[RMDB]
RNA sequence: GGGAACGACUCGAGUAGAGUCGAAAAAGAUCAUGAGGUCCUAAGGGACAGGGAUCAUGUCCAUUACCUUCUGUAUAUUUCCAGCAUCUAGUAGGGUGCCAAUGCCACCUAGGAUUGAGCCUAUGUCCCGUAUGACGGGGUUCGCCCCGUCAUACGGAAAAGAAACAACAACAACAAC
Reactivity to DMS in 0.01 (KOAc 150mM, MgCl2 10mM, bicine 150mM(pH8.5), 24C), signal-to-noise 1, nucleotides 027 to 126: a080g010a120u010c050a070u010g000a070g000g020u010c140c090u010a060a130g050g010g010a030c030a090g000g020g000a070u010c080a050u000g000u000c010c010a130u020u000a080c080c080u000u010c060u000g000u010a060u010a150u010u000u000c070c010a090g010c080a030u000c040u010a060g010u010a080g000g010g010u000g010c000c140a000a000u000g010c110c020a040c020c050u000a050g010g010a100u000u000g020a070g010c010c050u010a080u010g000u000c040
Reactivity to 2A3 in 0.01 (KOAc 150mM, MgCl2 10mM, bicine 150mM(pH8.5), 24C), signal-to-noise 2, nucleotides 027 to 126: a020g070a060u070c010a050u080g030a040g080g000u010c040c050u060a060a150g130g000g000a020c060a000g000g040g060a050u130c040a040u050g060u000c040c000a010u020u090a060c030c010u090u020c020u060g090u030a090u020a030u170u050u030c010c020a030g030c020a090u010c000u070a090g070u060a080g070g040g050u010g010c030c020a110a040u140g110c020c000a060c050c040u030a030g000g060a000u030u080g020a010g030c030c010u100a140u100g040u050c000

Record summary: The record gives the reactivity of an RNA of 177 nucleotides to DMS and 2A3. The data come from the RNA Mapping Database (RMDB), library OK2TST. The 2A3 profile rests on 1,157 reads. 2A3 adducts were read by reverse transcription with SuperScript II with manganese. For DMS, 1,467 sequencing reads were counted.